[RMDB]
RNA sequence: GGGAACGACUCGAGUAGAGUCGAAAAUCCAAGGACUCUGCUGGAGGAGUCAUACAAACUUCGCCAUUUCUUCCUCUGAUGUCCAUGUGCCAUGAUUGUCUGAGGAAGGGAGAAAAAGUCUUUGAAGCUCAAAGGGUGCAUUCGUGCACCCUUUGAGAAAAGAAACAACAACAACAAC
Reactivity to DMS in 0.01 (KOAc 150mM, MgCl2 10mM, bicine 150mM(pH8.5), 24C), signal-to-noise 1, nucleotides 027 to 126: u020c300c110a020a000g000g000a000c000u000c000u020g000c170u020g050g020a040g000g020a150g020u000c080a100u060a100c170a010a120a080c000u000u000c030g040c180c030a170u000u000u000c000u000u000c000c000u000c030u010g000a010u000g020u000c110c050a060u000g010u020g000c270c080a030u000g000a020u010u030g050u000c000u000g000a060g000g000a040a020g000g000g020a130g000a000a300a000a060a000g000u030c020u000u000u010g000a110a080g020
Reactivity to 2A3 in 0.01 (KOAc 150mM, MgCl2 10mM, bicine 150mM(pH8.5), 24C), signal-to-noise 3, nucleotides 027 to 126: u110c040c010a030a040g070g010a000c000u010c030u060g020c000u070g100g040a000g040g000a010g040u050c020a030u200a070c060a040a110a000c010u010u020c000g040c040c000a060u010u020u000c000u020u000c000c000u000c020u020g000a010u040g060u000c070c020a100u140g040u130g140c070c010a050u110g020a060u180u290g000u020c040u020g010a020g000g020a000a030g000g020g010a040g080a000a060a020a000a010g050u000c000u040u100u060g130a120a030g080
Chemical mapping of a 177-nucleotide RNA with DMS and 2A3.
For DMS the reverse transcriptase was MarathonRT.
The 2A3 profile rests on 1,461 reads.